[RMDB]
RNA sequence: GGGAACGACUCGAGUAGAGUCGAAAACGGUAAGCGCCUGCGGUUGAUGCAACAAUAUUUCCAGUGCGCUUGUUCGGUGGCGGAUAUCUUGCGUAAGCACCAUUUAGCAGGCCGCAAGCUGGCUGAACGAGAUAGUACUUUUCGAAGUACUAUCUCGAAAAGAAACAACAACAACAAC
Reactivity to 2A3 in 0.01 (KOAc 150mM, MgCl2 10mM, bicine 150mM(pH8.5), 24C), signal-to-noise 7, nucleotides 027 to 126: c010g010g020u050a050a010g000c010g000c020c010u030g010c050g090g020u050u060g040a070u050g010c030a050a030c010a070a050u040a060u070u100u000c020c020a050g050u120g200c020g000c000u030u050g110u180u110c080g010g010u020g060g020c020g000g010a020u020a030u080c060u030u050g010c040g060u070a090a020g010c010a020c030c000a010u050u070u080a040g000c020a010g010g030c050c040g000c010a010a010g000c010u040g090g010c030u050g030a080a020
Reactivity to DMS in 0.01 (KOAc 150mM, MgCl2 10mM, bicine 150mM(pH8.5), 24C), signal-to-noise 8, nucleotides 027 to 126: c040g020g010u010a030a300g000c030g010c020c020u000g010c060g010g010u000u000g020a060u000g010c080a100a090c090a040a050u000a060u010u010u010c030c010a100g030u000g010c030g010c020u000u000g010u010u010c140g010g040u000g010g010c040g000g010a050u000a020u000c050u000u010g010c070g010u010a110a120g010c030a050c050c020a070u000u000u000a160g020c020a040g010g010c060c050g020c030a020a220g010c030u000g010g010c050u000g010a080a190